Record summary: Source: RMDB library OK1LIB, as collected in RNAgym. This 177-nucleotide RNA was probed chemically with 2A3. The 2A3 profile rests on 8,260 reads.

RNA sequence: GGGAACGACUCGAGUAGAGUCGAAAACAGGGCCUUUGCGAUACCGUCUUCCCUCUCGGCGCCGGCGACGGGACGCUGGUCGGCUCCACGGAUGUCGGUACGGUCAGCUGGGUCGUGCCCACCGUACCCACCAAAAUCCUUUCGAGGAUUUUGGUGGAAAAGAAACAACAACAACAAC
Reactivity to 2A3 in 0.01 (KOAc 150mM, MgCl2 10mM, bicine 150mM(pH8.5), 24C), signal-to-noise 7, nucleotides 027 to 126: c030a010g030g000g010c010c020u110u200u230g040c030g050a060u040a120c000c010g010u010c020u040u020c010c030c000u020c040u010c040g030g010c030g000c010c000g000g010c040g060a060c050g040g050g080a060c100g050c100u090g090g000u030c030g020g000c000u000c010c000a040c040g040g010a080u090g020u060c040g000g020u020a040c020g030g090u090c030a040g020c040u040g020g010g000u030c040g070u060g050c000c000c010a010c010c020g050u120a080c010
For 2A3 the reverse transcriptase was SuperScript II with manganese.
The reactions ran in a buffer of 150 mM KOAc, 10 mM MgCl2 and 150 mM bicine (pH 8.5), at 24 C.